[RMDB]
RNA sequence: GGGAACGACUCGAGUAGAGUCGAAAACACGGCUGACACGGUCAAUCUCAAGCACCGCGCUCAUGGCAGUGACGUCGACCGUGACCACCGGCUCAUCGAAGCGCGGCUCGACACCGCCAACCACCGACGCAAAAUCAUGGUUCGCCAUGAUUUUGCGAAAAGAAACAACAACAACAAC
Reactivity to DMS in 0.01 (KOAc 150mM, MgCl2 10mM, bicine 150mM(pH8.5), 24C), signal-to-noise 2, nucleotides 027 to 126: c110a090c070g050g010c100u000g010a300c030a110c070g000g030u010c010a120a050u010c170u010c040a030a100g020c080a070c000c020g020c010g010c180u010c100a100u060g010g040c010a090g000u010g020a050c110g000u000c100g000a080c110c100g010u000g010a120c020c070a100c030c080g000g000c020u000c020a070u000c090g010a110a030g040c060g010c040g010g020c040u000c210g000a080c100a080c050c010g010c010c040a090a050c050c050a100c080c080g020a090
Reactivity to 2A3 in 0.01 (KOAc 150mM, MgCl2 10mM, bicine 150mM(pH8.5), 24C), signal-to-noise 2, nucleotides 027 to 126: c030a010c000g000g020c040u020g070a010c010a020c050g040g010u010c020a040a090u090c050u030c140a000a030g020c000a020c010c040g010c020g020c080u090c100a150u170g000g060c030a010g040u000g060a120c070g050u060c030g020a090c040c020g020u010g010a060c010c000a010c000c030g000g090c040u040c070a100u120c120g070a040a060g020c000g000c010g030g000c000u000c000g000a040c020a000c050c010g000c020c020a020a050c020c020a020c050c040g080a060